[RMDB]
RNA sequence: GGGAACGACUCGAGUAGAGUCGAAAACGUUACCGGUUGGCCAACAUAUUCAUGAAACAGUUUGGAUUUCACGAAUAGUCAGGGAUAGGUGAUCGCAUAUUGCGCGGAAGCAAUAACGCUCCCUGCGCUAUACGUAGACAUUCGUGUCUACGUAUAGAAAAGAAACAACAACAACAAC
Reactivity to DMS in 0.01 (KOAc 150mM, MgCl2 10mM, bicine 150mM(pH8.5), 24C), signal-to-noise 9, nucleotides 027 to 126: c100g010u000u000a040c020c010g010g020u000u000g010g010c020c030a070a070c090a110u000a020u000u000c010a050u000g000a020a020a020c040a210g010u010u010u010g020g010a230u000u000u000c010a020c040g000a020a020u000a020g000u000c090a070g000g000g000a050u000a070g020g010u000g000a050u010c080g020c090a110u000a070u000u000g000c010g020c080g010g010a070a070g010c010a050a060u010a060a170c170g000c040u000c010c000c010u000g020c060g010
Reactivity to 2A3 in 0.01 (KOAc 150mM, MgCl2 10mM, bicine 150mM(pH8.5), 24C), signal-to-noise 9, nucleotides 027 to 126: c030g020u030u030a030c010c000g030g070u060u080g100g030c020c000a030a010c020a120u060a020u030u030c020a020u050g030a020a030a020c040a070g130u130u190u250g250g060a280u020u020u030c020a020c020g000a010a020u030a040g050u070c060a050g040g020g020a060u080a050g000g040u040g020a050u110c030g000c070a040u070a040u130u130g000c050g000c050g110g080a060a030g000c010a020a100u070a170a050c070g010c020u030c010c010c020u040g010c040g010